[RMDB]
RNA sequence: GGGAACGACUCGAGUAGAGUCGAAAAGAAGAUUCACUCUCUAUAGACUCAUGAGGUAGAGUCUCAGUUGUGCUACCUCAAUCACAAUAUUACAGUUAGGCGAAACUGUAAUUAAGAACACAAUCGCCUGUGUUCUAGAGAGUGAAUCUGGAGAGUCCUCAUCAGUAUUAUUCGUAAUACUGAUGAGAAAAGAAACAACAACAACAAC
Reactivity to 2A3 in 0.01 (KOAc 150mM, MgCl2 10mM, bicine 150mM(pH8.5), 24C), signal-to-noise 6, nucleotides 027 to 156: g080a020a000g000a000u010u000c000a000c000u000c000u000c010u020a030u070a230g060a070c030u070c170a120u080g000a000g000g000u010a010g010a060g090u030c060u020c070a060g030u100u100g050u080g030c000u000a000c010c010u010c010a020a070u080c030a020c020a100a100u070a010u110u010a000c000a000g010u010u050a100g100g080c090g070a090a020a000c000u000g000u000a010a000u010u030a050a000g020a020a000c010a000c010a040a140u170c120g130c050c050u010g000u000g000u000u000c000u000a000g000a000g000a000g000u000g000a000a000u000c000u000g000g010a030g000a010g050u020c010
Reactivity to DMS in 0.01 (KOAc 150mM, MgCl2 10mM, bicine 150mM(pH8.5), 24C), signal-to-noise 3, nucleotides 027 to 156: g000a110a060g020a020u000u000c010a030c010u000c010u000c000u010a080u000a120g010a090c110u010c080a170u010g010a050g010g020u000a040g010a080g010u000c050u000c040a220g000u000u010g030u010g010c000u000a040c010c010u000c010a060a160u000c040a070c080a090a160u000a040u000u010a020c010a010g010u000u000a110g020g000c120g010a170a050a030c000u000g000u000a010a020u000u000a060a100g020a030a010c010a020c010a060a170u000c150g010c150c070u010g030u000g000u000u000c020u010a010g010a050g000a060g000u010g010a000a010u000c010u000g000g000a150g000a150g000u000c070